[RMDB]
RNA sequence: GGGAACGACUCGAGUAGAGUCGAAAAACAACGUUUAUAUAUUAAACAAAUGUCUUACUAUAGAUGCUAUAGUAAAUAUCUCUAUCCGUAUUGAACCACAAAUCAAUAGAAGGUUUAAUUUAUUUGAUCGAAUUUGUAAGUUCGCUUACAAAUUCGAAAAAGAAACAACAACAACAAC
Reactivity to 2A3 in 0.01 (KOAc 150mM, MgCl2 10mM, bicine 150mM(pH8.5), 24C), signal-to-noise 3, nucleotides 027 to 126: a010c000a030a010c030g000u040u040u000a200u000a060u060a040u090u160a060a010a000c000a040a190a090u090g010u040c030u060u010a010c000u000a000u040a120g190a300u210g100c000u010a020u000a000g020u020a010a030a030u090a060u010c040u000c020u030a110u070c050c040g060u050a030u000u050g030a050a060c020c020a090c040a130a090a080u140c030a060a040u050a090g220a190a010g040g030u030u020u050a080a060u000u060u130a070u040u070u040g040a020